The record gives the reactivity of an RNA of 177 nucleotides to DMS. Source: RMDB library OK2TRN, as collected in RNAgym. For DMS, 746 sequencing reads were counted. The RNA was probed in 150 mM KOAc, 10 mM MgCl2 and 150 mM bicine (pH 8.5) at 24 C. For DMS the reverse transcriptase was MarathonRT.
[RMDB]
RNA sequence: GGGAACGACUCGAGUAGAGUCGAAAAUGAUCGAGAGAUCUAACGAUGUACGCGAGUCAACCGCACAGACUCGAGCGAAAGCUCGGUCGAAAGACCGCGUACAUCGGUCGGCAAGUGUGGAGUCAAAGCAUACGUCGAUCUUCGGAUCGACGUAUGCAAAAGAAACAACAACAACAAC
Reactivity to DMS in 0.01 (KOAc 150mM, MgCl2 10mM, bicine 150mM(pH8.5), 24C), signal-to-noise 1, nucleotides 027 to 126: u000g000a040u000c000g040a290g000a260g000a010u000c000u000a010a130c040g000a040u000g020u000a010c000g030c010g000a070g000u010c000a010a140c000c050g000c040a090c080a300g030a010c000u000c010g000a020g030c010g000a170a080a170g000c010u000c010g030g000u000c000g000a060a080a090g010a000c000c000g040c010g000u000a010c010a000u000c000g010g030u000c130g040g000c010a020a040g040u000g030u010g010g000a300g010u000c030a060a060a090